[RMDB]
RNA sequence: GGGAACGACUCGAGUAGAGUCGAAAAACGAAACCCAAGGUGCAUGCCGAGGUGCGGUAGGCCUCGUUAACAUACCGCAAAAAAAUAGUCGCAAACGACGAAAACUACGCACUCGCAGCUUAAUAACAGUAGGGUCCCUACUUCGGUAGGGACCCAAGAUAAGGCUUAUCUUCGGAUAAGCCUUAUCAAAAGAAACAACAACAACAAC
Reactivity to 2A3 in 0.01 (KOAc 150mM, MgCl2 10mM, bicine 150mM(pH8.5), 24C), signal-to-noise 2, nucleotides 027 to 156: a000c040g040a110a020a030c010c000c010a030a040g110g010u080g010c060a090u070g050c080c040g030a040g040g110u080g010c050g060g030u060a010g020g030c000c010u030c000g030u030u060a040a020c020a120u070a050c050c070g020c080a000a050a000a000a000a070a110u200a040g030u080c030g000c060a080a040a060c050g020a000c010g010a060a030a010a020c020u110a010c010g020c020a010c020u040c030g050c040a030g000c030u110u070a090a060u150a270a020c050a090g110u160a110g100g000g000u000c000c000c000u020a010c000u020u070c190g050g040u000a000g000g000g010a000c000c000c000a000a000
Reactivity to DMS in 0.01 (KOAc 150mM, MgCl2 10mM, bicine 150mM(pH8.5), 24C), signal-to-noise 1, nucleotides 027 to 156: a200c070g000a090a090a180c040c020c010a070a210g020g010u010g000c020a120u000g000c020c000g000a150g020g060u000g060c010g000g010u010a040g020g040c000c020u000c120g010u000u010a070a070c000a130u030a050c000c030g080c030a010a000a110a100a200a040a140u000a040g040u000c050g000c070a080a090a140c030g000a060c000g000a040a020a040a150c010u000a030c040g010c010a060c070u000c040g010c000a090g060c070u000u000a040a100u010a050a100c090a070g000u010a150g000g020g030u000c000c000c010u010a010c010u000u010c130g000g030u010a000g000g070g000a000c010c010c000a010a010